[RMDB]
Structure probing data (2A3 and DMS) for a 177-nucleotide construct. Conditions: 150 mM KOAc, 10 mM MgCl2 and 150 mM bicine (pH 8.5), 24 C. The data come from the RNA Mapping Database (RMDB), library OK1LIB.
RNA sequence: GGGAACGACUCGAGUAGAGUCGAAAACUUGGUUAAACAGCGCAACGCCAUAUAUUUGGGUGUGCUGUUUUUCUAUUACAUGAUGUGUUUAUUACGUGGAUGAAUGCGUGGGUCUGAAUAUAGCCCGCACUGAUGAAUUUUUCGAAAUUCAUCAGUGAAAAGAAACAACAACAACAAC
Reactivity to 2A3 in 0.01 (KOAc 150mM, MgCl2 10mM, bicine 150mM(pH8.5), 24C), signal-to-noise 9, nucleotides 027 to 126: c040u030u060g030g000u020u020a000a000a000c000a000g000c000g010c040a110a180c110g220c150c010a030u140a050u070a170u210u160u060g020g010g000u000g010u000g000c000u000g000u000u000u000u000u000c000u010a040u020u170a090c110a130u160g040a130u100g100u010g070u110u130u080a160u100u100a060c030g040u050g090g130a150u100g100a170a070u210g030c020g010u060g000g020g000u060c050u060g100a150a030u190a050u110a120g040c000c010c010g000
Reactivity to DMS in 0.01 (KOAc 150mM, MgCl2 10mM, bicine 150mM(pH8.5), 24C), signal-to-noise 5, nucleotides 027 to 126: c050u000u000g000g010u000u000a000a000a000c000a000g000c000g020c010a030a060c040g020c000c000a010u020a130u050a110u030u010u000g010g000g030u000g010u000g010c010u000g010u000u000u000u000u000c000u000a040u040u060a100c210a090u020g000a080u020g010u000g000u000u000u000a040u020u020a050c030g010u000g000g010a110u030g000a070a050u030g000c020g010u010g000g010g010u010c040u010g010a090a100u030a100u020a130g000c000c010c030g000